[RMDB]
RNA sequence: GGGAACGACUCGAGUAGAGUCGAAAAGGGUUUGAGCCAUCGCCCGAAUAUGAUGGUUGAUACAAGUCGACAUUGUACGCGACGUAGUACGUACUCAUUAGUGCGAAAGCACGGUUAGUCCGACUGGGCAGGGACGAUCUUCUGUCAAUACUUAGAACAUACCGUACUCAUUCGUGAGUACGGUAUGAAAAGAAACAACAACAACAAC
Reactivity to DMS in 0.01 (KOAc 150mM, MgCl2 10mM, bicine 150mM(pH8.5), 24C), signal-to-noise 3, nucleotides 027 to 156: g000g020g000u000u000u010g010a090g010c010c090a070u000c010g010c040c060c030g000a070a050u010a050u000g010a040u000g010g030u000u020g020a120u000a070c180a080a140g020u000c020g020a050c030a120u000u000g030u000a010c040g020c030g000a100c000g030u000a130g040u000a060c030g010u000a030c010u000c110a130u010u000a080g000u000g000c010g020a130a090a240g000c010a020c020g010g040u000u000a130g020u000c040c010g020a130c030u000g000g000g000c040a100g010g010g000a080c080g010a090u000c040u000u000c030u000g020u000c010a080a140u000a100c050u010u010a110g010a070a300
Reactivity to 2A3 in 0.01 (KOAc 150mM, MgCl2 10mM, bicine 150mM(pH8.5), 24C), signal-to-noise 5, nucleotides 027 to 156: g050g000g000u050u110u160g060a000g020c010c010a000u010c010g040c020c020c030g020a070a040u220a130u120g010a000u000g010g020u030u070g030a040u050a210c120a130a020g020u040c030g030a040c080a150u120u230g030u090a040c110g000c030g040a030c030g010u000a030g010u020a060c020g000u010a000c000u010c030a020u040u090a110g020u000g000c010g060a100a010a000g000c010a010c000g000g000u020u030a010g000u020c040c020g010a010c060u060g010g000g000c020a030g060g000g020a070c060g050a110u040c030u100u000c020u030g060u050c000a060a050u090a130c080u160u150a080g050a080a010
Overview:
The record gives the reactivity of an RNA of 207 nucleotides to DMS and 2A3. Reactivities are given for positions 27 through 156. It was measured as part of the RMDB library OK3TST. For 2A3, 3,165 sequencing reads were counted.